RNA sequence: GGGAACGACUCGAGUAGAGUCGAAAAGGGACCGUCAUCACGCUCCUGGGCCUGACUCCGGAAGGCCACCGGGUGGCCGUUCACGUUUACGGCACGCGGCAGUACUUUUACAUGAACAAGGAGGAGGGGUUCUAUACUAAUUCGUUAGUAUAGAACCAAAAGAAACAACAACAACAAC
Reactivity to DMS in 0.01 (KOAc 150mM, MgCl2 10mM, bicine 150mM(pH8.5), 24C), signal-to-noise 9, nucleotides 027 to 126: g000g000g000a050c070c020g010u000c140a090u010c120a080c050g020c190u000c010c020u000g000g010g010c020c010u000g000a160c050u000c030c030g000g010a140a050g010g010c030c030a130c020c030g010g000g030u000g020g020c010c000g010u000u000c110a100c200g010u000u000u000a030c040g010g010c010a030c020g000c020g000g010c050a080g010u000a070c060u000u000u000u000a100c150a120u010g010a090a090c130a080a090g010g010a070g010g010a100g020g010
Reactivity to 2A3 in 0.01 (KOAc 150mM, MgCl2 10mM, bicine 150mM(pH8.5), 24C), signal-to-noise 9, nucleotides 027 to 126: g010g000g010a010c030c010g030u050c040a160u100c040a020c030g020c010u010c010c010u020g020g020g000c000c010u040g030a070c010u000c020c020g020g020a030a010g010g010c010c000a010c000c010g050g070g010u040g100g140c010c000g000u030u040c100a100c140g090u140u140u110a010c010g000g010c010a000c020g220c000g030g000c020a030g030u050a080c020u050u120u080u100a100c080a130u170g060a110a020c040a100a060g040g010a020g010g020a030g010g070